[RMDB]
RNA sequence: GGGAACGACUCGAGUAGAGUCGAAAAAGCAGUGAUACGUCACUGCACGAGGAUAAUAGGGGGCCACAGCAGAAGCGUUCACUUCGCGGCCCCUGUCAGAUUCUGGUGAAUCUGCGAAUUCUGCGAAAAAACUGUUAGUCGUUCGCGACUAACAGAAGUAAGCCUAUUCCUUCGGGAAUAGGCUUACAAAAGAAACAACAACAACAAC
Reactivity to 2A3 in 0.01 (KOAc 150mM, MgCl2 10mM, bicine 150mM(pH8.5), 24C), signal-to-noise 2, nucleotides 027 to 156: a000g000c000a000g000u010g010a010u040a070c180g020u000c000a000c000u000g040c020a000c040g050a080g210g060a100u090a160a020u090a210g000g000g000g020g000c000c000a020c010a020g010c010a000g000a020a000g000c000g010u050u070c030a020c120u040u040c040g000c000g000g010c000c000c000c000u000g000u030c000a010g000a010u000u060c010u300g170g020u270g080a000a000u000c000u000g010c000g010a010a030u040u010c010u000g010c000g080a120a020a000a000a000a000c010u000g000u000u000a000g000u000c040g010u060u040c230g020c000g080a000c000u000a000a000c000a000g000a040a000
This 207-nucleotide RNA was probed chemically with 2A3. 2A3 adducts were read by reverse transcription with SuperScript II with manganese. Source: RMDB library M2RFPK, as collected in RNAgym.